[RMDB]
RNA sequence: GGGAACGACUCGAGUAGAGUCGAAAACGCGCGAACGUAAAUUAUAUUGCGCGAAGCACGUGCGGAAAGGGCCCGAAACGCACGUGCGAAAUAACCGGGCCCGCGCAAUAUAAUUUACGGAAGCGCGGCGGUUAUAUUAGUUCGCUAAUAUAACCGCAAAAGAAACAACAACAACAAC
Reactivity to DMS in 0.01 (KOAc 150mM, MgCl2 10mM, bicine 150mM(pH8.5), 24C), signal-to-noise 1, nucleotides 027 to 126: c020g010c000g000c030g000a150a290c010g020u000a000a000a000u000u020a000u000a020u000u010g000c000g050c000g010a100a070g010c030a030c000g010u000g090c000g000g040a090a100a180g000g040g010c010c000c000g020a010a050a130c000g020c000a000c030g030u000g000c010g000a070a110a040u030a160a080c050c000g000g000g010c040c000c010g020c000g000c000a010a000u000a000u000a010a010u000u000u000a000c000g050g000a100a170g010c000g020c010g010
Reactivity to 2A3 in 0.01 (KOAc 150mM, MgCl2 10mM, bicine 150mM(pH8.5), 24C), signal-to-noise 4, nucleotides 027 to 126: c020g020c000g010c000g050a210a000c000g020u000a000a000a000u010u000a000u000a000u010u000g000c000g000c000g010a030a000g000c000a000c010g010u020g000c010g080g070a120a040a050g040g000g000c000c000c010g020a230a300a020c010g000c000a010c000g000u010g000c000g000a010a010a030u190a020a030c030c010g000g000g000c000c000c000g000c000g000c000a000a000u000a000u000a030a000u000u000u000a000c000g000g000a010a000g000c000g000c000g000